[RMDB]
RNA sequence: GGGAACGACUCGAGUAGAGUCGAAAAUUGCGGAAAUUGGUGUGGGUCGUAUUGUCCCCCCCUCUCCGCCAGAUUGAGGCGAGUAGGUGCGCCAGUGCCGCGUGGGUUUCGCCGGCGGCAUUGGGGGCUACUGCAUGUUGUUCGCAACAUGCAGUAGAAAAGAAACAACAACAACAAC
Reactivity to DMS in 0.01 (KOAc 150mM, MgCl2 10mM, bicine 150mM(pH8.5), 24C), signal-to-noise 3, nucleotides 027 to 126: u010u010g000c040g000g000a030a150a080u000u000g010g010u000g030u000g000g000g000u000c050g000u010a080u010u010g000u000c000c000c000c020c040c000c040u000c030u000c030c030g020c020c090a050g010a180u010u010g010a170g010g020c010g010a070g000u000a040g000g020u000g020c050g000c020c010a020g010u000g000c000c000g000c010g010u020g020g010g000u000u010u010c200g000c000c010g000g000c000g000g000c010a010u000u000g010g000g010g020g000
Reactivity to 2A3 in 0.01 (KOAc 150mM, MgCl2 10mM, bicine 150mM(pH8.5), 24C), signal-to-noise 2, nucleotides 027 to 126: u120u050g030c030g000g080a030a030a110u110u090g040g000u060g020u120g060g030g000u030c020g010u090a160u100u250g080u070c010c000c000c020c010c000c000u000c010u000c000c010g000c010c000a040g010a110u150u200g090a040g030g020c010g010a010g030u060a010g030g120u100g100c030g040c000c010a000g000u000g000c010c020g030c030g010u120g020g020g010u120u230u300c140g040c070c000g000g020c000g000g000c000a010u000u030g000g000g060g030g000